About this RNA: An RNA of 177 nucleotides, treated with 2A3 and DMS and read out base by base. For DMS, 1,830 sequencing reads were counted.
RNA sequence: GGGAACGACUCGAGUAGAGUCGAAAAUCAAUGGACUUCGGUCCAUUGAAAAAGUCAAUUAAGCUAGUGCUGAGCUGAAUGACAACAGCACAAAGAAAAGAAAAAUCGUGCACUUCGGUGCACGAAAGCUCACUAUAGAGUUCGCUCUAUAGUGAGCAAAAGAAACAACAACAACAAC
Reactivity to 2A3 in 0.01 (KOAc 150mM, MgCl2 10mM, bicine 150mM(pH8.5), 24C), signal-to-noise 3, nucleotides 027 to 126: u000c000a010a000u000g000g010a000c010u030u040c220g100g000u010c000c000a000u000u010g000a000a000a000a000a000g080u050c030a060a100u110u210a090a010g000c010u060a020g020u000g010c020u010g010a010g000c010u070g120a170a180u230g070a100c040a050a000c000a060g000c010a000c020a020a080a020g070a020a060a010a040g100a010a120a030a010a040u030c000g010u000g000c000a000c010u050u050c240g110g000u000g000c020a000c010g000a000a000a000
Reactivity to DMS in 0.01 (KOAc 150mM, MgCl2 10mM, bicine 150mM(pH8.5), 24C), signal-to-noise 2, nucleotides 027 to 126: u000c000a000a000u000g000g000a050c000u000u010c250g010g020u000c000c000a000u000u000g000a030a030a100a090a140g010u000c060a050a110u000u000a120a040g030c010u000a080g020u000g000c000u000g010a040g000c010u010g000a170a080u030g010a060c150a070a180c000a020g010c020a010c020a140a070a170g020a050a080a060a070g010a040a050a100a040a040u000c000g050u000g030c010a010c000u000u000c210g020g000u000g000c000a010c000g000a010a020a100
Source: RMDB library M2PK50, as collected in RNAgym.